RNA sequence: GGGAACGACUCGAGUAGAGUCGAAAAUGGAGGCGAACAUCGCCUUCAGUCUCCACCGUUUGCCCAAGGCGGAGCAGCGGCGAGUCGUGACUGAGAAGUUGAAGCUGGUGGGCCUUGAAGGAUUUGGGACUAGUCGCAGGUUCGCCUGCGACUAGUCAAAAGAAACAACAACAACAAC
Reactivity to DMS in 0.01 (KOAc 150mM, MgCl2 10mM, bicine 150mM(pH8.5), 24C), signal-to-noise 1, nucleotides 027 to 126: u000g070g010a050g000g000c000g050a220a250c290a060u000c000g000c000c000u010u010c000a100g000u000c030u000c000c050a140c010c000g050u010u000u050g020c140c060c040a020a110g050g060c030g000g120a250g000c070a120g010c140g000g000c050g000a000g000u150c000g040u000g000a300c140u000g000a200g000a110a050g000u000u000g000a080a000g000c020u000g000g070u000g000g080g000c050c040u000u050g050a040a000g070g040a070u050u110u000g000g030
Reactivity to 2A3 in 0.01 (KOAc 150mM, MgCl2 10mM, bicine 150mM(pH8.5), 24C), signal-to-noise 1, nucleotides 027 to 126: u020g020g010a000g000g000c000g010a050a170c140a300u200c080g020c010c000u000u000c000a000g000u070c020u000c010c000a020c050c000g000u150u300u300g000c040c000c000a060a100g170g000c140g060g000a090g000c000a000g030c000g000g000c000g000a000g000u000c010g000u020g040a070c010u110g020a030g000a080a000g000u040u100g020a150a000g010c060u000g000g050u020g030g000g110c000c070u110u100g020a100a000g050g000a070u030u020u170g110g000